[RMDB]
RNA sequence: GGGAACGACUCGAGUAGAGUCGAAAAGAUAUGGAGGUGUGGGAGCUCCGGAUCGGAAACGAUCCGAAGAGCGACGAUCACACGCUCCUAAGUCAAAGUUGAGUGAGUGUUCGCACUCACUCAACAAGAUCAAAGUUGUGUUCGCACAACUUUGAUCAAAAGAAACAACAACAACAAC
Reactivity to 2A3 in 0.01 (KOAc 150mM, MgCl2 10mM, bicine 150mM(pH8.5), 24C), signal-to-noise 1, nucleotides 027 to 126: g000a000u020a020u020g000g020a010g000g000u020g000u010g010g000g000a010g010c000u010c010c000g020g000a010u020c000g000g050a030a000a000c000g010a000u000c020c000g010a220a040g010a000g000c000g120a220c010g010a020u020c000a000c010a000c040g300c010u000c000c000u000a020a010g000u010c020a030a060a080g020u010u010g020a010g000u000g000a000g010u020g030u090u180c300g040c090a010c000u000c000a000c010u000c000a000a000c010a000a010
Reactivity to DMS in 0.01 (KOAc 150mM, MgCl2 10mM, bicine 150mM(pH8.5), 24C), signal-to-noise 2, nucleotides 027 to 126: g000a010u010a010u000g000g000a000g010g000u010g010u000g000g000g010a020g030c000u000c000c010g000g010a010u010c000g030g000a000a000a020c000g000a010u000c000c000g010a040a070g000a020g010c000g000a070c230g000a050u000c000a010c010a000c010g000c000u000c000c000u000a000a060g000u000c000a140a090a180g010u000u000g000a010g010u000g000a040g040u000g000u010u030c220g030c020a010c000u000c000a000c000u000c000a000a000c000a090a110